[RMDB]
RNA sequence: GGGAACGACUCGAGUAGAGUCGAAAAUGCUGCGCACUCUGCGCUAAAACAGAGCGAUGACCUGAAACCAGUCUUCGAUCAGGCAUUCACCAAAGUGGUAACGACGCCAGCUGAUGCGUUGCAACCGGUAGUUUGACUACUUCGGUAGUCAAACUACAAAAGAAACAACAACAACAAC
Reactivity to DMS in 0.01 (KOAc 150mM, MgCl2 10mM, bicine 150mM(pH8.5), 24C), signal-to-noise 2, nucleotides 027 to 126: u000g010c010u000g000c020g060c060a160c060u000c010u000g010c040g030c050u010a040a040a160a110c060a060g010a060g010c030g010a020u000g010a050c020c030u000g000a070a090a130c110c140a170g000u030c060u030u010c040g000a070u000c030a020g000g000c120a050u000u000c110a090c000c010a070a040a100g010u000g010g000u000a120a180c090g000a060c090g010c020c050a090g010c100u000g000a080u010g010c020g010u020u010g010c060a070a110c020c000g010
Reactivity to 2A3 in 0.01 (KOAc 150mM, MgCl2 10mM, bicine 150mM(pH8.5), 24C), signal-to-noise 3, nucleotides 027 to 126: u020g000c020u040g010c010g010c030a000c020u120c050u060g030c030g010c030u020a030a030a030a040c040a020g040a000g090c020g050a040u000g070a210c010c050u040g050a170a030a050c090c050a100g060u060c000u120u080c080g110a110u030c000a000g000g000c000a010u050u100c050a050c040c020a120a150a000g160u140g070g010u040a070a030c060g070a020c040g040c030c010a060g010c090u070g000a120u080g000c020g000u000u010g010c020a050a040c000c000g070